[RMDB]
RNA sequence: GGGAACGACUCGAGUAGAGUCGAAAAUUUGGGAGGCCCAGGCAGGAGGGUCGCUUGAGCCCAGGAGUUUGAGAAUAGCCUGGGCAACAUAGUGAUAACCCUCCAUCACUACAAAAAAUCAGAAGGGUGUGGUGGUGCACACCUGUAGUCCCAGCUAAGUGCUGGAUUUAUUCGUAAAUCCAGCACUAAAAGAAACAACAACAACAAC
Reactivity to 2A3 in 0.01 (KOAc 150mM, MgCl2 10mM, bicine 150mM(pH8.5), 24C), signal-to-noise 1, nucleotides 027 to 156: u100u050u000g010g000g000a060g000g010c000c010c010a010g030g080c110a050g000g040a030g000g000g000u050c000g000c010u020u020g010a000g000c020c010c000a010g020g000a020g000u210u300u250g150a130g060a130a090u120a090g020c000c010u010g000g040g000c000a000a000c010a000u030a010g000u000g000a050u160a130a000c010c010c010u020c010c000a000u000c000a000c020u090a010c030a100a050a080a000a020a090u150c060a060g040a280a050g210g060g030u020g000u000g030g010u000g040g000u050g000c020a000c000a000c110c060u010g010u010a020g010u000c000c000c000a000g070c090u040a090

This 207-nucleotide RNA was probed chemically with 2A3. Reactivities are given for positions 27 through 156. It was measured as part of the RMDB library OK3TST. Conditions: 150 mM KOAc, 10 mM MgCl2 and 150 mM bicine (pH 8.5), 24 C. 2A3 adducts were read by reverse transcription with SuperScript II with manganese.